[RMDB]
RNA sequence: GGGAACGACUCGAGUAGAGUCGAAAACAGUCGCGAAGCGUAAAACCGUCAUGUGCGGUGACGAGAUUAAUCGCGGCACUCGGCAGACGACCAUUACGUUUAAAAACAACGCUGGAGGCAGCAAAAAGCGUAUUUACUGAUUCGUCAGUAAAUACGCAAAAGAAACAACAACAACAAC
Reactivity to DMS in 0.01 (KOAc 150mM, MgCl2 10mM, bicine 150mM(pH8.5), 24C), signal-to-noise 3, nucleotides 027 to 126: c100a110g020u000c040g030c070g010a090a150g020c080g000u000a060a050a070a110c070c020g010u000c010a070u000g040u000g020c090g010g010u000g000a000c020g010a080g000a110u000u000a140a120u010c020g010c010g010g000c000a050c010u000c020g010g020c010a050g010a030c030g000a100c100c070a160u000u000a030c040g000u000u000u000a060a100a090a120a080c120a090a130c140g000c060u000g010g030a130g000g000c060a030g010c120a040a050a090a090a070
Reactivity to 2A3 in 0.01 (KOAc 150mM, MgCl2 10mM, bicine 150mM(pH8.5), 24C), signal-to-noise 3, nucleotides 027 to 126: c010a020g040u050c020g020c030g070a060a010g030c010g010u040a060a090a000a090c020c010g010u010c050a220u200g090u160g120c030g000g040u020g010a020c020g000a000g000a100u140u250a130a130u100c030g010c000g030g000c010a010c020u040c020g060g030c010a020g000a080c010g030a060c020c000a050u070u090a010c020g040u010u050u120a060a160a010a000a020c060a050a010c010g000c020u030g040g030a050g110g060c000a000g000c010a020a020a040a070a040
Chemical mapping of a 177-nucleotide RNA with DMS and 2A3.
The reactions ran in a buffer of 150 mM KOAc, 10 mM MgCl2 and 150 mM bicine (pH 8.5), at 24 C.